[RMDB]
RNA sequence: GGGAACGACUCGAGUAGAGUCGAAAAACGGGCAGUGGCGAUGGCAACGCGGCAGCCGCAGGGUCGACUUCUUCGCAGCCGCAACAGACGGGGGACGGGCAAAGAGGGGACCUCGUUCUGUUGGAAGCCGCUCCCGUCAUUUCGAUGACGGGAGCGGAAAAGAAACAACAACAACAAC
Reactivity to 2A3 in 0.01 (KOAc 150mM, MgCl2 10mM, bicine 150mM(pH8.5), 24C), signal-to-noise 1, nucleotides 027 to 126: a000c000g000g060g030c020a030g020u030g020g040c040g020a140u060g000g040c020a020a050c090g030c000g050g030c020a000g060c020c000g010c030a060g090g020g000u030c010g040a050c000u060u070c010u040u040c040g000c030a030g000c000c000g000c000a000a000c040a010g000a000c010g000g000g000g010g010a040c020g040g010g090c130a080a130a080g040a040g000g000g000g060a000c030c000u030c010g010u090u020c000u000g000u010u000g020g020a020a000g120